Chemical mapping of a 177-nucleotide RNA with 2A3 and DMS. The DMS profile rests on 4,081 reads. The RNA was probed in 150 mM KOAc, 10 mM MgCl2 and 150 mM bicine (pH 8.5) at 24 C. The 2A3 profile rests on 8,121 reads. 2A3 adducts were read by reverse transcription with SuperScript II with manganese.
[RMDB]
RNA sequence: GGGAACGACUCGAGUAGAGUCGAAAAUCACAAAGCGGAUUUAGCUCGGUUGGGAGAGGUCCAGACCGAUGAUCUGGUGAUCCUGUGUCCGAGACACAGAAUUCGCACCAUAAACAACGGGAGAUUCGCUACCGUAAUAGUUCGCUAUUACGGUAGCAAAAGAAACAACAACAACAAC
Reactivity to 2A3 in 0.01 (KOAc 150mM, MgCl2 10mM, bicine 150mM(pH8.5), 24C), signal-to-noise 8, nucleotides 027 to 126: u120c020a020c050a090a140a010g000c000g000g010a010u010u020u040a030g010c000u000c010g000g060u070u160g030g020g010a050g000a020g080g120u050c000c000a000g010a010c020c130g170a200u250g060a170u020c000u000g000g000u020g020a020u030c010c000u090g040u040g090u130c010c020g040a020g130a060c030a000c010a050g070a010a000u010u000c010g010c000a040c020c020a070u250a070a160a040c080a070a020c090g040g070g000a120g030a070u090u090c060
Reactivity to DMS in 0.01 (KOAc 150mM, MgCl2 10mM, bicine 150mM(pH8.5), 24C), signal-to-noise 3, nucleotides 027 to 126: u020c070a110c110a040a080a070g040c000g020g000a000u000u000u010a130g000c000u020c000g010g020u000u020g000g050g010a030g030a160g010g000u030c000c020a020g000a020c030c300g010a140u020g050a100u000c000u000g010g000u010g020a140u000c030c000u000g000u030g000u070c000c070g000a030g000a110c070a070c190a100g000a020a030u000u000c070g000c010a130c040c130a060u070a140a080a080c150a120a120c080g000g000g000a200g010a090u010u020c170
Source: RMDB library OK1LIB, as collected in RNAgym.